RNA sequence: GGGAACGACUCGAGUAGAGUCGAAAACCCCCGAUCCGAGGGGCCCGACUGCCAAGUUUGGAGAGCACCUCGGGCCGAAGGGUUGAGUAGCACUCAAAGGGAGGAAUCCACUCGGAGUAGAACAGAGCACGUAUGUAUGGUUCGCCAUACAUACGUGAAAAGAAACAACAACAACAAC
Reactivity to DMS in 0.01 (KOAc 150mM, MgCl2 10mM, bicine 150mM(pH8.5), 24C), signal-to-noise 4, nucleotides 027 to 126: c030c010c000c080c040g000a040u000c000c010g000a030g000g010g000g020c020c010c000g030a070c120u000g010c120c140a140a140g000u000u000u000g040g010a140g000a120g000c030a030c050c040u000c000g010g000g010c020c000g010a100a110g020g000g030u010u000g000a060g020u000a100g000c060a300c020u000c020a030a060a150g000g000g000a050g010g020a130a110u000c010c030a110c050u000c070g010g010a020g010u000a110g020a060a120c140a140g000a130g010
Reactivity to 2A3 in 0.01 (KOAc 150mM, MgCl2 10mM, bicine 150mM(pH8.5), 24C), signal-to-noise 2, nucleotides 027 to 126: c030c000c000c010c000g000a030u000c000c000g010a000g090g040g000g020c010c000c020g030a010c000u040g060c040c050a210a170g040u090u190u240g220g030a220g030a040g020c020a010c020c000u000c000g000g020g010c000c020g020a050a050g050g020g020u010u000g010a020g040u080a010g010c050a010c070u000c000a010a070a160g070g020g000a070g020g110a040a090u010c000c000a060c090u010c040g110g020a040g020u090a050g050a100a020c070a030g100a010g120